[RMDB]
RNA sequence: GGGAACGACUCGAGUAGAGUCGAAAAGUUAGGUGAGGCUCCUAUGCAAACACAGGCCACUGCCCAAAAAUGUCCAAAGACGCCAAUGGGUAGAACAGGGAUUGUCGGAUUAAUGCUUUCCAUAAUGAAAACAAAGUAUGCUUCGGCAUACUUUGAACCCAUAGUGCUAGUUCGCUAGCACUAUGGGAAAAGAAACAACAACAACAAC
Reactivity to 2A3 in 0.01 (KOAc 150mM, MgCl2 10mM, bicine 150mM(pH8.5), 24C), signal-to-noise 2, nucleotides 027 to 156: g060u040u060a010g000g030u020g050a020g010g040c020u000c030c040u070a080u120g060c040a030a150a010c020a010c010a110g020g020c000c010a040c010u010g000c010c000c010a030a050a000a000a010u010g000u000c010c020a160a020a140g030a000c020g000c020c010a010a050u020g010g000g000u030a010g010a020a020c060a030g080g040g020a090u040u090g020u060c030g050g020a030u020u130a080a030u180g020c000u000u090u010c040c010a070u100a230a100u200g090a020a030a030a030c000a000a010a000g000u000a000u000g000c000u020u080c130g060g000c020a000u000a000c000u000u000u000g000a000a000
Reactivity to DMS in 0.01 (KOAc 150mM, MgCl2 10mM, bicine 150mM(pH8.5), 24C), signal-to-noise 2, nucleotides 027 to 156: g030u020u000a110g040g020u010g000a100g040g010c030u010c000c000u000a060u020g000c080a210a090a130c050a090c020a090g030g010c010c020a120c070u000g010c030c030c040a010a030a050a080a110u010g000u000c030c040a060a130a170g000a060c050g070c070c050a010a210u010g000g060g050u000a060g010a080a170c030a140g020g010g040a080u000u000g010u010c000g000g040a130u000u010a080a100u020g000c040u000u000u010c000c000a120u000a050a050u010g010a090a090a060a130c000a010a010a050g000u000a000u000g000c020u000u000c300g050g000c000a010u010a010c020u000u010u000g010a010a120